[RMDB]
RNA sequence: GGGAACGACUCGAGUAGAGUCGAAAAUUACAAUUAAUAGUAUAAACUAAUCGUUAUUAUAAGUAAUAUCAAAAUGAUGAUAUACGGAUUAAUAGCGUGACUUCAUCCAUCGCUAGUCCACCCAUUACGGAAGAUAAAUCGUUCAAUAGUGUAGAGGCACGUUACAUUCCUUCGGGAAUGUAACGUGAAAAGAAACAACAACAACAAC
Reactivity to 2A3 in 0.01 (KOAc 150mM, MgCl2 10mM, bicine 150mM(pH8.5), 24C), signal-to-noise 1, nucleotides 027 to 156: u120u030a000c000a010a040u210u220a160a060u300a290g000u130a150u250a300a120a000c040u130a140a110u040c000g000u000u030a010u000u000a000u000a010a000g000u000a000a300u010a000u000c000a100a100a040a170u290g060a040u010g000a000u040a000u000a000c000g000g000a010u000u000a000a010u000a090g010c000g070u010g000a010c070u150u020c040a100u040c000c000a040u040c030g000c010u000a000g060u030c000c010a000c030c040c030a000u010u010a000c000g010g030a060a000g000a120u090a060a090a030u010c000g010u100u000c060a050a050u030a060g030u030g040u090a010g010a060g070g000

An RNA of 207 nucleotides, treated with 2A3 and read out base by base. The reactions ran in a buffer of 150 mM KOAc, 10 mM MgCl2 and 150 mM bicine (pH 8.5), at 24 C. Values are in units of 0.01, from 0 to 300, in steps of 10. For 2A3, 287 sequencing reads were counted.